[RMDB]
The record gives the reactivity of an RNA of 177 nucleotides to DMS and 2A3.
For DMS the reverse transcriptase was MarathonRT.
RNA sequence: GGGAACGACUCGAGUAGAGUCGAAAAUACAAGGAGCUUAGUUGCUGACUUUUCAGAUCAGCUAACUCAAUUAUCAAUUUGCAUGGUGUGUGGAAUGUGGCUGGUCAGGAAUAAGAAUUUCACACUCCUAAUGGCGAUUCUUCGGAAUCGCCAUUAGAAAAGAAACAACAACAACAAC
Reactivity to DMS in 0.01 (KOAc 150mM, MgCl2 10mM, bicine 150mM(pH8.5), 24C), signal-to-noise 2, nucleotides 027 to 126: u010a110c150a060a110g010g000a050g020c210u000u000a020g000u000u000g010c010u000g000a060c300u010u020u010u000c130a040g000a110u000c030a040g000c010u000a020a060c030u000c040a050a060u010u000a040u000c140a060a100u010u000u010g020c130a040u000g030g030u000g030u000g000u010g010g010a000a020u000g020u000g010g000c010u010g000g000u000c030a060g010g000a080a060u010a090a110g000a090a040u000u000u000c000a030c020a040c040u000c010
Reactivity to 2A3 in 0.01 (KOAc 150mM, MgCl2 10mM, bicine 150mM(pH8.5), 24C), signal-to-noise 1, nucleotides 027 to 126: u210a000c030a050a000g240g040a030g060c030u050u080a020g060u140u070g000c000u000g050a130c100u150u070u250u240c020a000g020a170u070c020a020g010c000u000a010a030c010u000c030a010a040u210u100a120u170c050a020a150u070u100u300g070c030a050u090g000g000u050g070u010g010u030g010g060a010a010u070g020u020g150g020c080u080g000g030u050c040a000g050g110a040a060u190a070a050g060a030a000u000u020u030c010a000c010a030c030u000c010

2A3 adducts were read by reverse transcription with SuperScript II with manganese. The DMS profile rests on 1,284 reads. It was measured as part of the RMDB library OK2TRN.